[RMDB]
Source information: The record gives the reactivity of an RNA of 177 nucleotides to DMS and 2A3.
RNA sequence: GGGAACGACUCGAGUAGAGUCGAAAACCUGGGCUCUAGCAGCACAGAAAUAUUGGCACAGGGAAGCGAGUCUGCCAAUAUUGGCUGUGCUGCUCCAGGCAGGGAAACGUUACACUUCGGUGUAACGGUUCAGAGCGAUGUUCGCAUCGCUCUGAACAAAAGAAACAACAACAACAAC
Reactivity to DMS in 0.01 (KOAc 150mM, MgCl2 10mM, bicine 150mM(pH8.5), 24C), signal-to-noise 2, nucleotides 027 to 126: c010c000u000g010g010g010c080u000c130u010a020g000c010a000g000c000a010c000a000g010a240a000a010u000a000u000u000g000g020c000a050c130a200g010g010g000a100a110g010c100g000a070g030u000c110u000g000c000c000a010a020u010a010u010u000g010g000c000u000g000u000g010c010u000g010c000u000c020c010a000g010g000c070a080g010g010g010a090a050a210c000g000u000u000a010c000a010c000u000u000c170g020g000u000g020u000a010a010c000g010
Reactivity to 2A3 in 0.01 (KOAc 150mM, MgCl2 10mM, bicine 150mM(pH8.5), 24C), signal-to-noise 3, nucleotides 027 to 126: c000c000u020g010g060g000c040u100c040u220a000g010c000a000g000c000a000c000a010g020a000a010a000u020a000u010u010g010g020c040a020c060a110g150g080g250a120a030g210c070g070a050g170u020c060u040g000c000c000a000a000u050a020u050u060g070g000c000u000g000u000g000c010u000g000c000u000c000c000a000g010g000c010a030g060g030g060a110a080a010c020g000u010u000a000c000a010c010u060u070c200g080g000u010g000u010a000a000c000g010

The RNA was probed in 150 mM KOAc, 10 mM MgCl2 and 150 mM bicine (pH 8.5) at 24 C. The data come from the RNA Mapping Database (RMDB), library RFMREP. The 2A3 profile rests on 3,821 reads.